[RMDB]
RNA sequence: GGGAACGACUCGAGUAGAGUCGAAAAGCUAGCCAGCGCACGAUGAGACUGCCGUGACGUUUAGCCUGCGUCUCAACUAGUCUCCAUCAAUCAAAACGCUGGGAUUGAUGUACGAGACUAGUACACAGACUAUGCACUUGUUCGCAGGUGUAUAGUCAAAAGAAACAACAACAACAAC
Reactivity to DMS in 0.01 (KOAc 150mM, MgCl2 10mM, bicine 150mM(pH8.5), 24C), signal-to-noise 9, nucleotides 027 to 126: g000c030u010a090g000c020c050a080g010c010g010c040a040c030g010a090u020g000a100g010a050c040u020g020c050c050g010u000g010a060c040g000u000u010u020a130g010c040c020u010g000c030g000u000c010u000c060a110a040c010u000a000g000u000c000u000c000c010a010u000c000a010a010u000c010a070a080a100a110c130g000c100u010g020g010g000a010u000u000g000a000u000g000u050a100c170g010a010g010a020c010u000a000g010u000a060c200a090c210a130
Reactivity to 2A3 in 0.01 (KOAc 150mM, MgCl2 10mM, bicine 150mM(pH8.5), 24C), signal-to-noise 9, nucleotides 027 to 126: g030c020u040a010g020c000c020a010g000c010g000c010a020c020g050a040u110g020a020g050a080c060u100g040c030c010g040u040g040a120c020g010u040u020u110a020g000c000c010u020g010c010g040u010c010u000c030a020a020c000u000a000g000u000c000u000c000c000a000u000c000a000a000u010c010a010a070a080a120c130g050c130u140g070g010g000a000u000u000g000a000u000g030u080a070c080g000a000g000a010c000u000a000g010u040a000c070a000c000a010